[RMDB]
This 177-nucleotide RNA was probed chemically with 2A3 and DMS. The 2A3 profile rests on 2,154 reads.
RNA sequence: GGGAACGACUCGAGUAGAGUCGAAAAGCGCUUUUACAAAUCUAGAUAAGUUGAAGUUCAAAGAGGUCUGUAAAACUACUACUGGUAUACCUGAAUACAACUUUAUCAUCUACGACUCAUCAGAUCGCAUACCAGUUGUGUUCGCACAACUGGUAUGAAAAGAAACAACAACAACAAC
Reactivity to 2A3 in 0.01 (KOAc 150mM, MgCl2 10mM, bicine 150mM(pH8.5), 24C), signal-to-noise 3, nucleotides 027 to 126: g030c020g020c040u070u070u030u070a070c040a060a180a050u020c040u110a060g030a080u020a110a000g000u000u010g050a130a030g020u000u050c030a090a070a080g160a040g040g040u020c050u070g140u160a000a090a140a080c030u060a030c010u030a040c040u070g050g000u040a030u030a060c010c020u000g000a030a000u050a000c010a010a010c000u040u090u060a040u050c010a000u000c010u020a010c040g040a040c030u010c020a080u030c020a070g040a110u080c030g010
Reactivity to DMS in 0.01 (KOAc 150mM, MgCl2 10mM, bicine 150mM(pH8.5), 24C), signal-to-noise 2, nucleotides 027 to 126: g000c100g000c050u000u000u010u030a110c100a120a130a090u020c040u000a080g030a050u000a040a040g010u010u010g010a080a100g010u000u010c090a060a110a130g000a070g000g000u000c130u000g010u000a030a030a020a050c160u000a020c060u010a080c130u010g020g030u000a040u000a040c030c020u010g020a030a040u000a100c150a020a040c030u010u000u010a030u010c070a050u000c060u000a060c070g000a010c080u000c040a070u010c030a040g000a070u010c110g000
The RNA was probed in 150 mM KOAc, 10 mM MgCl2 and 150 mM bicine (pH 8.5) at 24 C.